[RMDB]
RNA sequence: GGGAACGACUCGAGUAGAGUCGAAAACGUCCUUCCCUUUUCUUAUUAUUCCGAGGAUGUUUCCCAGCCAGGGAUUUUCAUCCUCGAGUUUCUUGAUGGUUCUCCUGCUCUUCCGGAGCCUUCUUUCGUAGGGUUGGGUUCGCCCAACCCAAAAGAAACAACAACAACAAC
Reactivity to 2A3 in 0.01 (KOAc 150mM, MgCl2 10mM, bicine 150mM(pH8.5), 24C), signal-to-noise 2, nucleotides 027 to 129: c090g130u110c000c000u000u040c020c000c000u000u140u040u000c030u150u090a190u050u110a060u300u120c040c060g000a010g000g000a000u000g000u000u000u000c000c000c000a060g180c100c050a060g000g010g010a000u000u000u000u190c000a000u000c000c000u000c000g020a010g000u000u120u000c040u030u070g080a170u100g000g000u030u000c030u020c050c060u000g040c000u010c000u060u000c000c030g030g000a030g000c010c000u100u030c000u000u030u070c100g070u090a090
Reactivity to DMS in 0.01 (KOAc 150mM, MgCl2 10mM, bicine 150mM(pH8.5), 24C), signal-to-noise 2, nucleotides 027 to 129: c180g000u000c000c030u010u030c000c000c060u000u000u000u000c220u070u020a160u050u040a080u020u090c150c060g020a050g030g000a010u000g060u080u000u000c010c020c010a110g030c300c160a170g020g080g000a040u020u000u000u000c020a000u030c000c060u020c050g000a000g040u000u020u040c080u000u040g050a080u040g070g000u030u020c000u140c000c010u020g020c050u000c050u080u000c000c130g000g020a170g020c070c020u020u020c020u010u030u060c100g060u000a120
Chemical mapping of a 170-nucleotide RNA with 2A3 and DMS.
For DMS the reverse transcriptase was MarathonRT.
The reactions ran in a buffer of 150 mM KOAc, 10 mM MgCl2 and 150 mM bicine (pH 8.5), at 24 C.
2A3 adducts were read by reverse transcription with SuperScript II with manganese.
It was measured as part of the RMDB library 15KLIB.
For 2A3, 2,622 sequencing reads were counted.